RNA sequence: GGGAACGACUCGAGUAGAGUCGAAAAUUUUCGCAGCACUUUCCGUGGUUGGAACGUGUGUUUGAGGAGCGGUUCCAUGCGAUUGAUGAGGUAACCAACCGGAGUCAAGAGGGGGUUGCAGCUGCAACACGCCGUGCUCAUUCGUGAGCACGGCGUGAAAAGAAACAACAACAACAAC
Reactivity to DMS in 0.01 (KOAc 150mM, MgCl2 10mM, bicine 150mM(pH8.5), 24C), signal-to-noise 1, nucleotides 027 to 126: u020u000u000u010c060g040c100a200g010c000a040c060u000u000u000c020c010g040u000g010g040u020u000g010g000a010a030c050g000u000g060u000g020u030u010u010g020a150g010g000a230g000c090g000g010u000u000c060c040a050u000g000c110g000a230u000u040g010a010u010g000a300g000g000u020a080a140c080c210a120a120c010c000g010g030a150g000u000c070a060a040g010a180g020g000g000g000g000u000u000g020c070a080g000c110u020g020c000a020a130

Overview
Source: RMDB library OK2TST, as collected in RNAgym. An RNA of 177 nucleotides, treated with DMS and read out base by base. DMS (dimethyl sulfate) methylates the pairing face of unpaired adenines and cytosines. For DMS, 851 sequencing reads were counted. Values are in units of 0.01, from 0 to 300, in steps of 10.